Record summary
The record gives the reactivity of an RNA of 177 nucleotides to 2A3 and DMS. The reactions ran in a buffer of 150 mM KOAc, 10 mM MgCl2 and 150 mM bicine (pH 8.5), at 24 C. The 2A3 profile rests on 4,289 reads.
RNA sequence: GGGAACGACUCGAGUAGAGUCGAAAACCUGCCCCUAGAGGCCUUGCAGGUGUGGCUGCUGUGUCCCAUGUGGGUCAAUAGGUGGCAGAGAGGAGAAAGGCUAUGUCUUCGGUCUGUGUUCUGACCUAUGAGAUGUAAUCUUCGGAUUACAUCUCAUAAAAGAAACAACAACAACAAC
Reactivity to 2A3 in 0.01 (KOAc 150mM, MgCl2 10mM, bicine 150mM(pH8.5), 24C), signal-to-noise 4, nucleotides 027 to 126: c000c000u010g000c000c000c000c000u020a010g020a030g040g000c030c010u060u300g010c030a050g080g040u080g020u080g140g000c040u140g060c080u140g150u050g020u230c030c010c010a020u060g020u040g020g000g000u000c000a010a030u010a020g070g000u140g090g000c010a000g020a010g000a030g040g040a070g050a040a090a010g080g000c060u090a070u220g040u030c020u060u060c050g020g010u000c020u030g080u010g070u110u010c040u070g020a050c010c020u020
Reactivity to DMS in 0.01 (KOAc 150mM, MgCl2 10mM, bicine 150mM(pH8.5), 24C), signal-to-noise 3, nucleotides 027 to 126: c050c000u010g010c000c000c000c020u010a030g010a300g000g010c020c010u010u000g040c010a060g020g050u010g040u010g020g000c030u000g010c170u010g020u010g010u000c010c010c020a120u000g050u010g000g000g010u000c010a040a200u000a040g010g030u010g020g020c010a020g010a080g020a130g000g000a070g020a060a110a090g000g000c060u010a070u010g010u000c050u010u000c060g010g000u000c020u000g000u000g000u000u000c050u000g000a100c090c050u000